Annotation:
This 207-nucleotide RNA was probed chemically with 2A3 and DMS. The RNA was probed in 150 mM KOAc, 10 mM MgCl2 and 150 mM bicine (pH 8.5) at 24 C. The 2A3 profile rests on 1,449 reads. DMS (dimethyl sulfate) methylates the pairing face of unpaired adenines and cytosines. Values are in units of 0.01, from 0 to 300, in steps of 10. The DMS profile rests on 2,941 reads. The data come from the RNA Mapping Database (RMDB), library OK3TST.
[RMDB]
RNA sequence: GGGAACGACUCGAGUAGAGUCGAAAAAAAGAUUUUGGUUGCAAUUGGCGUUUUGUGAUCACAUUCUCCAUCUUCUUCUUCUUCUUUGAGAUAAACAAAGAGAUUUGUUUACUCUCUAUCUCAGGAUUUCUUCACACAUCUGCUCUUACGAGACCAACAUGGACGAAAAUUUCGAUUUUCGUCCAUGAAAAGAAACAACAACAACAAC
Reactivity to 2A3 in 0.01 (KOAc 150mM, MgCl2 10mM, bicine 150mM(pH8.5), 24C), signal-to-noise 2, nucleotides 027 to 156: a000a010a000g060a010u090u110u110u100g050g020u120u010g000c020a030a030u030u020g030g020c010g000u040u070u120u110g040u140g060a130u130c030a030c020a090u060u060c020u000c040c000a050u000c030u030u020c000u040u000c000u060u010c000u070u030c000u090u120u080g010a010g020a020u040a010a030a000c010a020a040a010g060a040g000a070u010u010u000g030u000u000u030a030c030u000c000u000c010u010a050u030c030u010c030a030g050g050a120u040u050u030c020u000u070c050a070c010a000c010a160u030c020u050g000c000u000c000u020u060a040c080g080a030g020a080c050c030a010a090
Reactivity to DMS in 0.01 (KOAc 150mM, MgCl2 10mM, bicine 150mM(pH8.5), 24C), signal-to-noise 1, nucleotides 027 to 156: a040a060a090g020a120u020u010u000u000g040g020u040u010g030c000a040a120u000u000g000g000c070g030u000u000u010u030g000u010g000a180u010c040a090c120a110u020u000c030u000c020c010a080u000c030u000u000c020u020u000c050u000u000c030u000u020c040u010u010u000g000a040g010a100u000a030a010a080c030a000a040a020g000a300g000a300u000u000u000g000u010u000u010a000c070u000c000u000c010u000a050u000c050u010c040a100g040g000a130u000u020u000c020u030u000c030a090c060a090c090a080u000c050u000g020c050u010c050u000u000a130c110g010a120g010a090c040c030a070a260